[RMDB]
RNA sequence: GGGAACGACUCGAGUAGAGUCGAAAAAAGGCUACAGGGCAACGAUGCAUUAUUAGGCAAAAGUGGGUAGGACCUGGUGGUGCUGAUAAGGGCUCAUGCAGUAAUUUCUGAACCUCUUUACAUACAUGCUGCUCUUCAAACAUCUUCCUUUUCCUAAUAUAAAUACCGUCUUCGGACGGUAUUUAUAAAAAGAAACAACAACAACAAC
Reactivity to 2A3 in 0.01 (KOAc 150mM, MgCl2 10mM, bicine 150mM(pH8.5), 24C), signal-to-noise 2, nucleotides 027 to 156: a020a010g020g020c010u030a010c060a050g010g000g000c010a060a050c070g060a010u060g000c010a010u040u100a090u080u080a140g040g000c030a050a030a050a030g060u090g030g030g010u050a040g020g020a030c020c010u000g000g020u000g000g010u030g010c040u010g020a080u040a150a080g000g000g020c000u000c020a010u030g030c020a000g030u080a070a070u050u190u070c060u060g110a110a080c030c020u090c040u060u040u020a080c040a060u130a030c000a010u020g020c030u000g000c000u050c000u090u080c040a030a150a050c020a040u040c040u050u110c020c000u000u050u000u080c050c030u060a150a170
Reactivity to DMS in 0.01 (KOAc 150mM, MgCl2 10mM, bicine 150mM(pH8.5), 24C), signal-to-noise 2, nucleotides 027 to 156: a050a100g010g030c050u000a080c060a090g030g010g010c010a080a040c050g000a180u000g000c010a090u030u000a130u010u010a090g020g010c040a050a070a070a070g040u000g020g010g040u010a160g010g000a120c050c030u020g000g020u000g010g040u000g020c030u000g000a150u020a040a060g020g020g020c010u010c040a060u010g010c010a070g020u020a070a120u000u000u000c020u000g030a050a080c100c020u000c030u000u000u000a050c070a130u000a080c020a070u000g010c040u000g020c000u000c010u010u000c070a060a070a090c050a090u000c040u000u010c040c030u010u010u000u000c010c010u000a020a250
Record summary: Conditions: 150 mM KOAc, 10 mM MgCl2 and 150 mM bicine (pH 8.5), 24 C. This 207-nucleotide RNA was probed chemically with 2A3 and DMS. For DMS the reverse transcriptase was MarathonRT. For 2A3 the reverse transcriptase was SuperScript II with manganese. The 2A3 profile rests on 1,218 reads.